[RMDB]
Structure probing data (DMS and 2A3) for a 170-nucleotide construct. The DMS profile rests on 2,858 reads. Source: RMDB library 15KLIB, as collected in RNAgym. Conditions: 150 mM KOAc, 10 mM MgCl2 and 150 mM bicine (pH 8.5), 24 C.

RNA sequence: GGGAACGACUCGAGUAGAGUCGAAAAAUAGCAGUUUCCAGGACCCCCUUCCAAAAAGACUGAGGGGGGUGGCUAGGACGCAGGGGACCAGUGGAGCCGUGGGAUGCUCUUCCCAAUCUGACCUGACAUGGAGCGCCGUUCGCGGCGCUCAAAAGAAACAACAACAACAAC
Reactivity to DMS in 0.01 (KOAc 150mM, MgCl2 10mM, bicine 150mM(pH8.5), 24C), signal-to-noise 3, nucleotides 027 to 129: a110u090a000g000c080a090g040u010u000u000c000c040a040g050g000a050c080c000c020c000c000u030u040c040c150a040a070a170a070a070g060a080c260u010g000a070g050g000g150g020g000g050u000g000g090c000u060a080g000g000a110c230g010c100a050g050g060g000g020a050c120c080a070g040u020g000g000a120g010c000c060g140u000g030g000g000a000u030g010c040u010c100u000u000c000c010c060a090a000u010c070u070g000a200c090c050u070g020a110c120a140u020g000
Reactivity to 2A3 in 0.01 (KOAc 150mM, MgCl2 10mM, bicine 150mM(pH8.5), 24C), signal-to-noise 1, nucleotides 027 to 129: a000u020a010g010c060a000g080u000u000u000c000c030a000g010g030a000c010c000c000c000c000u000u000c050c020a180a060a000a000a150g200a070c050u130g000a000g000g000g000g010g000g020u020g000g010c030u070a080g060g020a000c060g060c000a000g000g000g000g080a010c030c010a000g000u000g050g010a030g050c000c000g040u160g000g030g000a020u070g000c050u000c000u030u000c000c000c030a000a070u070c060u090g070a040c050c000u050g000a010c020a080u050g000